[RMDB]
RNA sequence: GGGAACGACUCGAGUAGAGUCGAAAAGCGGUUCAACGGCCCCGCGGCAUCGCGAGCCGACCAGUCGUGCAUCACGUCUUUGAGGCCGUCCGGCGCGUCAUAGCCCAGCCACGCAAUGGAUGCCACCGUGUCGUUGUGUUUUCGAACACAACGACACAAAAGAAACAACAACAACAAC
Reactivity to 2A3 in 0.01 (KOAc 150mM, MgCl2 10mM, bicine 150mM(pH8.5), 24C), signal-to-noise 2, nucleotides 027 to 126: g010c020g040g050u060u090c040a050a050c030g020g020c020c050c080c020g020c020g000g020c070a150u230c040g020c020g020a020g000c010c020g040a000c010c010a000g030u050c000g060u040g000c040a050u090c020a050c020g050u060c090u050u120u180g110a080g050g030c040c020g030u000c000c070g080g000c000g000c000g020u050c020a090u120a090g000c000c000c000a000g030c030c010a060c010g020c010a030a030u070g050g000a030u060g000c010c020a040c060c050
Reactivity to DMS in 0.01 (KOAc 150mM, MgCl2 10mM, bicine 150mM(pH8.5), 24C), signal-to-noise 2, nucleotides 027 to 126: g010c010g010g000u000u000c070a100a120c160g030g000c020c040c080c050g040c050g020g020c150a080u000c050g010c140g010a110g000c000c030g030a150c110c080a160g000u010c060g010u000g100c060a070u000c050a020c120g000u000c070u030u000u020g000a090g000g000c060c020g020u020c040c030g010g010c200g010c030g010u000c030a110u000a090g000c020c010c010a130g000c090c100a040c070g020c070a080a300u030g000g000a050u000g020c040c040a140c130c150
Chemical mapping of a 177-nucleotide RNA with 2A3 and DMS. For DMS the reverse transcriptase was MarathonRT. Reactivities are given for positions 27 through 126. 2A3 is a SHAPE reagent: it acylates the 2'-hydroxyl of flexible nucleotides of all four kinds.